[RMDB]
RNA sequence: GGGAACGACUCGAGUAGAGUCGAAAACACUAAGUGUGAGGCACCAACUGAACACUGAGUUUACAGCUGUCUCUGCCUCAUGGAAUUUCUAGGCUAAUGGGUAGUAGGGGGAUUAAAUGAACAAUUAUAUGAAGAUUAAAUGAACAAUUAUAUGAAACUAGUGAGUACUGUUCGCAGUACUCACUAGAAAAGAAACAACAACAACAAC
Reactivity to 2A3 in 0.01 (KOAc 150mM, MgCl2 10mM, bicine 150mM(pH8.5), 24C), signal-to-noise 2, nucleotides 027 to 156: c180a010c030u160a060a080g040u030g000u000g120a020g030g000c000a000c040c010a070a010c010u010g010a030a000c010a060c130u090g010a110g030u090u040u110a110c020a000g010c050u000g010u070c020u010c000u060g000c000c000u030c010a020u000g020g000a010a070u090u130u050c050u060a020g010g000c010u020a000a090u090g020g000g000u020a020g050u020a030g000g020g000g000g050a000u010u190a040a030a060u080g030a020a040c040a020a000u190u100a080u090a050u190g020a020a060g060a040u130u210a030a040a150u080g040a030a010c010a040a000u140u120a130u040a010u230g000a010a030a010
Reactivity to DMS in 0.01 (KOAc 150mM, MgCl2 10mM, bicine 150mM(pH8.5), 24C), signal-to-noise 1, nucleotides 027 to 156: c040a260c050u000a120a050g020u000g030u000g010a160g050g040c040a150c070c050a060a040c020u000g020a170a030c030a220c140u030g010a170g010u000u000u000a150c000a040g050c020u020g030u000c040u000c050u000g040c020c020u030c100a010u000g000g030a060a120u000u000u000c050u000a070g020g000c020u010a050a090u010g000g010g010u010a160g000u000a160g020g000g020g060g010a090u000u000a000a050a120u000g000a050a140c030a050a160u000u000a040u010a050u020g000a050a110g000a120u000u000a020a050a170u010g020a080a100c050a020a070u010u000a180u000a100u010g020a090a110a150